[RMDB]
RNA sequence: GGGAACGACUCGAGUAGAGUCGAAAAGCUUCAGCAUGAGGUGUGAUUACAAAGGAAUGAAACUGUUUUUCUUAUGUGGUUUGUGGAAUUGGUUCUGUUACUUUGUAGUUAUAUAUCAUAGAUCUAACUCCCUCCGUCACUUCGGUGACGGAGGGAGAAAAGAAACAACAACAACAAC
Reactivity to 2A3 in 0.01 (KOAc 150mM, MgCl2 10mM, bicine 150mM(pH8.5), 24C), signal-to-noise 1, nucleotides 027 to 126: g000c010u170u130c090a010g040c000a020u000g000a070g040g000u000g000u000g080a000u090u000a000c000a000a000a000g040g000a030a100u000g030a000a010a000c000u000g250u070u050u050u050u100c050u070u110a060u110g130u150g000g290u150u100u150g090u090g000g000a050a080u130u170g080g000u000u000c000u000g070u110u050a050c000u010u030u030g000u000a000g000u000u000a000u000a000u050a000u000c000a000u000a000g100a060u010c010u050a020a120